[RMDB]
RNA sequence: GGGAACGACUCGAGUAGAGUCGAAAAUUAGACAUGACAAUGCGGUUGGGGUGCGCGUUGCGCCGGUUAACCGUAUCGUCAAAUAAGAUGUAAGGAUAACCGCUUUCAAAGUGCAGUUCCGCCACUGUCAUCCUCCUGCAUUCGUGCAGGAGGAUGAAAAAGAAACAACAACAACAAC
Reactivity to DMS in 0.01 (KOAc 150mM, MgCl2 10mM, bicine 150mM(pH8.5), 24C), signal-to-noise 2, nucleotides 027 to 126: u010u000a040g020a130c300a060u000g000a030c010a080a040u000g010c020g000g010u010u000g020g030g000g000u010g050c010g020c220g040u010u010g000c100g000c140c000g000g010u010u000a020a010c010c010g030u010a010u000c060g010u000c010a020a040a100u010a130a190g000a050u000g000u010a070a120g000g010a120u000a040a020c060c040g010c060u000u020u000c130a120a070a070g010u000g010c080a120g010u010u000c000c030g020c070c030a070c130u010g000
Reactivity to 2A3 in 0.01 (KOAc 150mM, MgCl2 10mM, bicine 150mM(pH8.5), 24C), signal-to-noise 2, nucleotides 027 to 126: u100u040a040g080a040c080a060u030g000a010c010a020a040u060g000c010g040g000u030u090g090g040g040g020u150g020c040g000c010g190u200u150g000c000g000c040c020g030g100u030u060a010a000c010c000g000u000a020u030c010g000u020c000a000a110a000u070a020a030g050a030u070g030u110a000a080g030g000a010u030a040a020c000c030g010c090u080u140u150c110a170a150a000g000u040g030c070a050g030u080u000c020c000g040c070c020a070c020u040g040